[RMDB]
RNA sequence: GGGAACGACUCGAGUAGAGUCGAAAAAGGUUGGUUAAUGGAAGACCUCAAAGGCUGCCGUUGCAUGGGAUGUUUAACUAAAAUAAAAGAACUCUCUGAAUCAAUGUCAGUAAACCAGGAUAGGCUGGAGUACUUGUCAACCAACUGCCAAACAAAGGUCUAUCUUACUUUUCGAAGUAAGAUAGACAAAAGAAACAACAACAACAAC
Reactivity to DMS in 0.01 (KOAc 150mM, MgCl2 10mM, bicine 150mM(pH8.5), 24C), signal-to-noise 2, nucleotides 027 to 156: a040g030g000u000u000g010g040u000u030a050a060u010g030g020a080a160g000a070c010c030u000c080a120a190a180g000g020c010u000g020c030c030g080u000u000g020c010a110u010g000g010g010a060u010g020u020u000u000a100a300c150u010a070a070a130a260u000a030a050a110a160g010a040a020c020u000c010u000c010u000g010a120a120u030c020a050a030u000g010u000c000a030g000u010a030a050a040c030c020a090g030g000a150u000a060g000g040c050u000g000g010a200g030u000a050c050u000u000g010u000c050a010a080c020c000a010a030c000u000g000c020c030a050a090a070c060a040a170a120g020
Reactivity to 2A3 in 0.01 (KOAc 150mM, MgCl2 10mM, bicine 150mM(pH8.5), 24C), signal-to-noise 4, nucleotides 027 to 156: a010g030g000u020u010g000g000u040u040a070a040u110g040g020a030a020g020a060c020c010u050c060a120a080a010g120g000c000u010g010c010c010g010u000u020g000c040a030u100g000g000g030a080u180g040u000u040u060a040a040c030u080a060a050a050a300u210a060a160a020a040g040a030a010c010u000c000u000c020u070g060a040a050u110c010a000a010u040g010u000c010a000g020u080a050a080a060c020c000a000g030g020a140u110a110g120g010c010u010g010g020a030g020u020a070c020u040u060g040u060c030a010a000c010c000a010a000c020u050g030c000c000a040a180a100c050a030a090a040g010